[RMDB]
RNA sequence: GGGAACGACUCGAGUAGAGUCGAAAAUGGAUUUUUAUUGGAGUAAUCAAUUAAAUCACCAGUAAAUACUAUUAUAUCUGGAUUCAAAGUGUUAAUCUUAUUAGCUACUUUUUUGAGAUUCUUAGUUGACUAUCAUGGUGUUCGCACCAUGAUAGUCAAAAGAAACAACAACAACAAC
Reactivity to 2A3 in 0.01 (KOAc 150mM, MgCl2 10mM, bicine 150mM(pH8.5), 24C), signal-to-noise 1, nucleotides 027 to 126: u070g000g010a060u000u000u000u090u090a000u020u020g050g000a180g100u240a070a200u110c050a000a000u060u230a050a010a000u190c000a010c070c000a000g000u070a000a040a070u060a050c010u010a010u180u050a220u040a000u110c010u000g010g020a010u140u150c120a020a090a000g000u000g000u000u100a000a040u190c160u300u260a120u060u000a110g000c020u020a220c060u170u150u000u000u000u140g160a090g000a000u080u000c000u050u000a100g030u140u070
Chemical mapping of a 177-nucleotide RNA with 2A3.
It was measured as part of the RMDB library OK1LIB.
The RNA was probed in 150 mM KOAc, 10 mM MgCl2 and 150 mM bicine (pH 8.5) at 24 C.
2A3 adducts were read by reverse transcription with SuperScript II with manganese.
The 2A3 profile rests on 354 reads.